[RMDB]
Conditions: 150 mM KOAc, 10 mM MgCl2 and 150 mM bicine (pH 8.5), 24 C. An RNA of 207 nucleotides, treated with 2A3 and read out base by base. The 2A3 profile rests on 552 reads. The data come from the RNA Mapping Database (RMDB), library RSTRND.
RNA sequence: GGGAACGACUCGAGUAGAGUCGAAAAAGUGGUCUUGUAAACCAUAAGACAAUUUCUUUACUAAGCGGAAAAGAAAACAAAAAAGAAGAUUAUUCAUUAUUAAUGAAUGCUUCAACUCAAUCAAAUCUAGCUUUUGCAUUUUAAAAAACUAGUAGACGAGUAACAUAACGUUCGCGUUAUGUUACUCAAAAGAAACAACAACAACAAC
Reactivity to 2A3 in 0.01 (KOAc 150mM, MgCl2 10mM, bicine 150mM(pH8.5), 24C), signal-to-noise 1, nucleotides 027 to 156: a000g160u080g000g000u020c000u020u020g020u050a020a000a210c020c000a100u010a060a000g020a000c010a050a070u000u050u040c010u000u000u010a020c060u020a040a130g130c050g030g010a060a020a020a000g020a000a110a070a000c040a030a240a020a000a010a000g020a040a040g000a070u140u300a000u020u180c000a000u010u300a110u290u210a240a030u030g000a000a000u010g020c000u020u000c000a000a070c020u020c060a040a150u120c010a000a040a110u010c000u020a010g020c050u110u040u010u020g050c050a100u000u000u300u300a080a120a020a000a020a000c050u040a000g070u050a050g010a090c080